Chemical mapping of a 177-nucleotide RNA with 2A3. For 2A3, 810 sequencing reads were counted. For 2A3 the reverse transcriptase was SuperScript II with manganese.

RNA sequence: GGGAACGACUCGAGUAGAGUCGAAAAAUUUAAUGGCCAGGACGGUCACCUUUGGGGUGGUGACAAGUGUGAUCACUUGGGUGGUGGCUGUGUUUGCGGUUCUCCCAGGAAUCUCGUUUACCAGAUCGACCGAUAGUACCUUCGGGUACUAUCGGUCAAAAGAAACAACAACAACAAC
Reactivity to 2A3 in 0.01 (KOAc 150mM, MgCl2 10mM, bicine 150mM(pH8.5), 24C), signal-to-noise 2, nucleotides 027 to 126: a000u190u180u080a150a050u040g020g030c000c000a010g060g040a000c010g040g020u000c000a000c000c060u030u070u030g070g000g040g000u070g010g000u000g000a000c000a040a040g270u200g000u000g140a000u060c020a030c000u010u020g130g020g000u020g040g000u010g000g020c000u000g000u000g000u030u000u100g020c020g000g020u020u000c000u000c000c010c000a000g220g020a050a010u070c020u000c040g040u010u100u000a170c070c020a040g110a170u110c120